[RMDB]
Chemical mapping of a 177-nucleotide RNA with DMS and 2A3. DMS adducts were read by reverse transcription with MarathonRT. The DMS profile rests on 1,735 reads. The RNA was probed in 150 mM KOAc, 10 mM MgCl2 and 150 mM bicine (pH 8.5) at 24 C. 2A3 adducts were read by reverse transcription with SuperScript II with manganese. Reactivities are given for positions 27 through 126.
RNA sequence: GGGAACGACUCGAGUAGAGUCGAAAAGACGCGCGAGCCAGGCGACGUCGCGCCCCGCGCCGCAACCGACGUCCGCCGUGGGUCCGGGCUCGAAGUAGCGUUCGAGCAGUACGUACAUGUCGUCGGAGGCACUAUCAGGAUUCGUCCUGAUAGUGCCAAAAGAAACAACAACAACAAC
Reactivity to DMS in 0.01 (KOAc 150mM, MgCl2 10mM, bicine 150mM(pH8.5), 24C), signal-to-noise 2, nucleotides 027 to 126: g000a040c030g000c040g020c080g020a080g010c030c010a170g010g000c010g010a060c010g020u000c000g040c140g010c030c000c030c110g030c110g000c020c030g010c080a170a090c210c030g000a010c000g030u010c050c080g070c020c020g010u000g020g000g010u000c040c040g000g010g000c020u000c000g000a020a030g000u000a230g000c300g010u000u010c010g000a010g000c000a120g000u000a040c090g000u000a100c140a050u010g010u000c030g000u010c030g000g030a270
Reactivity to 2A3 in 0.01 (KOAc 150mM, MgCl2 10mM, bicine 150mM(pH8.5), 24C), signal-to-noise 1, nucleotides 027 to 126: g030a020c020g000c020g010c050g040a030g040c000c010a010g010g010c000g010a040c010g010u030c000g000c020g000c000c000c000c030g010c040g000c010c000g000c010a060a020c030c000g000a010c000g000u090c120c080g000c010c020g150u090g010g030g050u000c000c010g000g040g050c000u020c020g010a020a020g000u050a010g020c070g060u010u020c000g000a000g020c010a010g080u110a040c070g040u040a030c020a050u150g060u090c040g000u000c020g000g040a040